[RMDB]
RNA sequence: GGGAACGACUCGAGUAGAGUCGAAAAGACUGCGUGCACUUGAGACGAUAUCGAGCCGGAAAUUAAUCGAUAAUGUCUCAUGUAGUGGAUACGAUCCGGCAAGUAUCGACUACCUGUGCUCGUAGGAGACGUGCCAUGGGUUCGCCCAUGGCACGUCAAAAGAAACAACAACAACAAC
Reactivity to 2A3 in 0.01 (KOAc 150mM, MgCl2 10mM, bicine 150mM(pH8.5), 24C), signal-to-noise 1, nucleotides 027 to 126: g160a020c000u000g000c000g040u000g000c000a000c050u010u020g010a000g000a000c030g000a010u000a000u050c040g020a000g020c000c000g040g080a060a190a060u300u280a100a240u030c000g000a000u000a000a050u100g040u020c010u000c000a060u080g030u020a020g010u000g110g000a000u000a000c040g000a030u020c000c000g000g000c000a000a020g020u000a000u000c000g020a000c000u020a000c030c030u080g000u080g000c010u070c000g000u000a000g000g000a050